The record gives the reactivity of an RNA of 207 nucleotides to 2A3. The RNA was probed in 150 mM KOAc, 10 mM MgCl2 and 150 mM bicine (pH 8.5) at 24 C. For 2A3 the reverse transcriptase was SuperScript II with manganese. Values cover nucleotides 27 to 156. The data come from the RNA Mapping Database (RMDB), library ARCHII.
RNA sequence: GGGAACGACUCGAGUAGAGUCGAAAACCCGCUAAAACUUUACUGGGAUCGCCGUAUGUUUUCCUUGCCCGUCGGGUAGCAUGCGGUUAAAUUAAUGACUGGGCUAUGCAUGUAGAACCGAAGGCGGAGUACUUGUGGACGCGGGUUCGAUUCCCGCCGGGUACAUUACGUUCGCGUAAUGUACCCGAAAAGAAACAACAACAACAAC
Reactivity to 2A3 in 0.01 (KOAc 150mM, MgCl2 10mM, bicine 150mM(pH8.5), 24C), signal-to-noise 1, nucleotides 027 to 156: c000c000c000g000c030u150a140a110a050a130c080u140u260u260a050c070u160g000g000g110a030u130c000g000c000c000g010u010a010u030g000u020u040u000u210c030c020u010u020g040c000c000c000g020u010c010g010g000g070u010a040g000c000a000u020g000c000g000g000u010u040a000a020a000u020u070a000a060u090g010a010c070u200g010g010g000c000u040a020u090g050c020a100u050g010u040a020g040a270a020c090c020g040a060a000g110g040c010g000g010a040g050u030a070c060u070u030g000u000g050g000a060c020g000c000g010g000g000u000u030c050g010a030u000u010c010c000c010g040c010